Chemical mapping of a 177-nucleotide RNA with DMS.
The data come from the RNA Mapping Database (RMDB), library OK2TRN.
DMS adducts were read by reverse transcription with MarathonRT.

RNA sequence: GGGAACGACUCGAGUAGAGUCGAAAAGGAGUGAAAGGGGCCUACAGUCGUUUACAUUUGUCAAGUGCUCAGUUGAUUGUCUCCCUGUACUAGGGCUUGAUGAGUGCCUGGAGUUCGAUUUAUGUACAGUACGAGCGUAUUUCGAUACGCUCGUACUAAAAGAAACAACAACAACAAC
Reactivity to DMS in 0.01 (KOAc 150mM, MgCl2 10mM, bicine 150mM(pH8.5), 24C), signal-to-noise 2, nucleotides 027 to 126: g000g000a080g010u010g020a080a090a120g000g000g010g010c060c020u000a080c100a060g020u010c060g030u010u010u000a170c080a100u010u000u000g000u000c040a030a060g010u000g000c030u000c080a060g010u000u010g010a190u000u000g020u000c070u000c020c010c010u000g020u010a020c050u010a040g000g000g010c060u000u000g010a060u020g010a080g020u000g010c080c030u000g010g000a060g010u000u000c060g010a160u000u000u000a070u010g010u000a060c210